[RMDB]
RNA sequence: GGGAACGACUCGAGUAGAGUCGAAAAUUUGCAAAUGUGGGCGCGGUACAUCCACAUGGGAAAUUCCACUUACCAGUGGGAAGGAGGGUUGAUGUCAAGUUUGUCAGCAGCACGAUCGCGCAGGUUAGCUGCCAGUAAUAUUCGUAUUACUGGCAGCAAAAGAAACAACAACAACAAC
Reactivity to DMS in 0.01 (KOAc 150mM, MgCl2 10mM, bicine 150mM(pH8.5), 24C), signal-to-noise 3, nucleotides 027 to 126: u000u000u000g000c170a060a110a030u000g000u000g000g000g020c040g000c030g000g010u000a170c090a100u000c030c010a020c020a060u010g000g000g010a060a110a190u010u000c020c000a070c020u010u000a210c220c100a050g000u000g010g000g000a040a050g020g000a160g010g000g000u000u000g000a070u000g010u000c070a050a100g010u010u010u010g000u000c070a050g000c050a070g020c040a060c050g020a110u000c060g010c060g020c070a070g010g000u000u000a100
Reactivity to 2A3 in 0.01 (KOAc 150mM, MgCl2 10mM, bicine 150mM(pH8.5), 24C), signal-to-noise 1, nucleotides 027 to 126: u090u040u080g030c050a000a010a170u050g000u030g030g010g000c030g000c050g050g000u090a050c050a090u020c010c020a000c060a070u020g040g000g000a010a030a070u060u000c020c000a140c020u030u140a050c010c080a060g000u010g000g000g000a010a020g020g010a060g060g000g010u010u090g050a060u030g010u030c040a000a100g080u040u230u100g060u050c060a010g000c000a000g000c020a020c040g030a030u070c020g000c000g030c010a020g000g100u060u100a020
An RNA of 177 nucleotides, treated with DMS and 2A3 and read out base by base. DMS adducts were read by reverse transcription with MarathonRT. The RNA was probed in 150 mM KOAc, 10 mM MgCl2 and 150 mM bicine (pH 8.5) at 24 C.